Background: An RNA of 177 nucleotides, treated with DMS and read out base by base. The RNA was probed in 150 mM KOAc, 10 mM MgCl2 and 150 mM bicine (pH 8.5) at 24 C. Values are in units of 0.01, from 0 to 300, in steps of 10.
RNA sequence: GGGAACGACUCGAGUAGAGUCGAAAAGCGAUAGCGUUCGCGCUAUCGCAAAUAAAUUCAGCGGUUUAAAUUUCGAGGCCAUAAGCGCUGAUGGCCUCGAAAAAACUCGACAGUUCGCUGUCGAGAAUCCAGUCAUGUAGUUCGCUACAUGACUGGAAAAAGAAACAACAACAACAAC
Reactivity to DMS in 0.01 (KOAc 150mM, MgCl2 10mM, bicine 150mM(pH8.5), 24C), signal-to-noise 1, nucleotides 027 to 126: g030c000g020a000u000a000g020c010g030u000u010c200g030c000g020c010u000a000u010c010g000c010a000a020a040u000a020a060a110u010u010c020a100g050c110g000g030u010u000u020a080a110a140u000u010u000c000g010a040g000g010c000c000a020u010a080a070g010c100g010c070u020g000a040u000g000g000c020c000u020c020g010a020a010a030a040a020a100c010u010c020g020a010c010a010g020u020u010c220g010c000u000g020u000c000g000a010g020a050a130

Description:
For DMS the reverse transcriptase was MarathonRT.